RNA sequence: GGGAACGACUCGAGUAGAGUCGAAAAAGGCGAUGGACAUCAGGUUAAUAAUCCUGAGCUCGCAACCCUUAAACUGGGGGGACGCAUGAGAAAAGAUGACUAGGUUAUUGAAUUCCGAGUUGAGUCCAUCCGGACCGGUAUUCGUACCGGUCCGGAUAAAAGAAACAACAACAACAAC
Reactivity to 2A3 in 0.01 (KOAc 150mM, MgCl2 10mM, bicine 150mM(pH8.5), 24C), signal-to-noise 2, nucleotides 027 to 126: a000g180g000c020g000a000u100g080g020a000c030a150u000c000a010g000g060u050u070a150a000u080a120a060u130c000c020u000g000a000g000c000u000c000g000c030a100a090c000c000c000u000u060a250a170a180c280u130g000g000g000g000g000g000a020c090g000c030a030u070g110a070g020a080a040a000a110g070a080u040g000a030c010u030a000g110g000u200u080a090u110u230g180a110a180u170u060c000c000g000a040g020u030u060g010a010g000u000c000c000
Reactivity to DMS in 0.01 (KOAc 150mM, MgCl2 10mM, bicine 150mM(pH8.5), 24C), signal-to-noise 1, nucleotides 027 to 126: a150g000g000c050g040a010u020g000g000a020c120a290u000c000a140g000g000u090u020a250a210u000a110a140u010c000c020u000g000a040g110c050u000c000g000c030a010a070c070c010c030u020u030a130a050a110c090u100g000g000g000g000g000g000a050c230g060c040a060u000g000a040g000a060a030a000a150g010a060u040g030a000c000u000a090g070g020u010u000a100u000u000g000a070a290u000u000c060c010g020a000g000u020u000g000a080g000u000c000c040
An RNA of 177 nucleotides, treated with 2A3 and DMS and read out base by base. The RNA was probed in 150 mM KOAc, 10 mM MgCl2 and 150 mM bicine (pH 8.5) at 24 C. Source: RMDB library RFM100, as collected in RNAgym.